[RMDB]
RNA sequence: GGGAACGACUCGAGUAGAGUCGAAAAGGAUGCAGCGUAGUAAUAUUGACAACUACCUCAUGUGCAGUUACACAUUGUCAAUCGAUAUGCGUUCGUAACUGCACAACGCGUAUCGACAUCCGGAUCGCUACUAGAUUGAAUUCGUUCAGUCUAGUAGAAAAGAAACAACAACAACAAC
Reactivity to 2A3 in 0.01 (KOAc 150mM, MgCl2 10mM, bicine 150mM(pH8.5), 24C), signal-to-noise 9, nucleotides 027 to 126: g020g000a000u010g010c030a020g010c030g040u020a000g020u010a030a140u070a080u110u170g080a040c040a060a010c050u040a030c000c020u070c020a050u050g000u000g000c010a000g000u010u020a010c050a000c020a050u060u100g040u050c030a060a130u090c060g010a010u020a030u120g040c030g020u030u070c030g000u020a010a010c010u010g000c010a000c000a010a000c000g000c000g010u040a040u060c030g020a020c010a010u000c000c000g000g020a040u050c040g000
Reactivity to DMS in 0.01 (KOAc 150mM, MgCl2 10mM, bicine 150mM(pH8.5), 24C), signal-to-noise 9, nucleotides 027 to 126: g000g010a020u000g010c060a190g010c070g020u000a050g010u000a060a080u010a200u000u000g000a060c110a100a070c080u000a060c070c100u010c100a060u000g010u000g000c010a020g000u000u000a020c010a120c150a070u000u000g010u000c050a060a090u000c070g000a080u010a050u000g010c070g010u000u000c160g010u000a010a020c040u000g000c040a020c030a010a000c030g010c010g020u000a020u000c020g010a190c060a020u000c010c010g000g000a230u000c100g010